About this RNA:
Chemical mapping of a 207-nucleotide RNA with DMS and 2A3. For DMS, 2,523 sequencing reads were counted. The data come from the RNA Mapping Database (RMDB), library RSTRND. The RNA was probed in 150 mM KOAc, 10 mM MgCl2 and 150 mM bicine (pH 8.5) at 24 C. For 2A3, 738 sequencing reads were counted. Values cover nucleotides 27 to 156.
[RMDB]
RNA sequence: GGGAACGACUCGAGUAGAGUCGAAAAAAAAGGAUGAUCCGCAGCGAAACCCUCUUGUUGUACAAAAGUGGGUGGCGUUCACAGACUAAACGGCGAUGGGUUCCAGAAAUUCGAAACCUGGGCUUAAGAUGUAGUCGGUUUGUCUUCGAAAGUGGCACUUAUUCAUCAACUUCGGUUGAUGAAUAAGAAAAGAAACAACAACAACAAC
Reactivity to DMS in 0.01 (KOAc 150mM, MgCl2 10mM, bicine 150mM(pH8.5), 24C), signal-to-noise 1, nucleotides 027 to 156: a010a060a080a040g000g030a110u000g020a050u000c020c010g000c020a090g020c020g020a030a030a020c000c020c000u000c030u000u000g030u010u000g020u000a300c170a030a030a020a060g020u000g000g020g040u020g000g030c000g000u000u000c050a110c040a140g030a070c000u020a040a070a070c110g040g010c010g000a140u010g030g010g020u010u000c020c000a130g040a060a100a180u020u010c080g020a080a070a060c030c000u020g020g010g030c010u000u000a080a060g000a070u000g010u010a050g030u000c020g000g000u000u000u010g020u010c050u000u010c080g020a040a070a080g000u000g000g010c020a160
Reactivity to 2A3 in 0.01 (KOAc 150mM, MgCl2 10mM, bicine 150mM(pH8.5), 24C), signal-to-noise 2, nucleotides 027 to 156: a000a000a000a000g070g000a060u090g020a050u080c050c110g000c050a050g040c020g020a060a080a040c000c050c020u000c020u050u060g090u030u130g070u070a100c070a070a110a050a080g010u040g010g020g000u040g000g000c040g020u100u090c070a070c010a020g010a040c020u050a060a070a000c010g000g040c010g090a050u090g010g000g000u200u270c010c000a020g040a030a100a030u230u190c100g020a120a020a030c020c020u010g000g010g030c010u090u050a100a040g010a110u090g070u110a020g020u040c010g000g010u010u030u050g010u000c030u020u070c010g050a010a000a100g040u050g010g020c010a020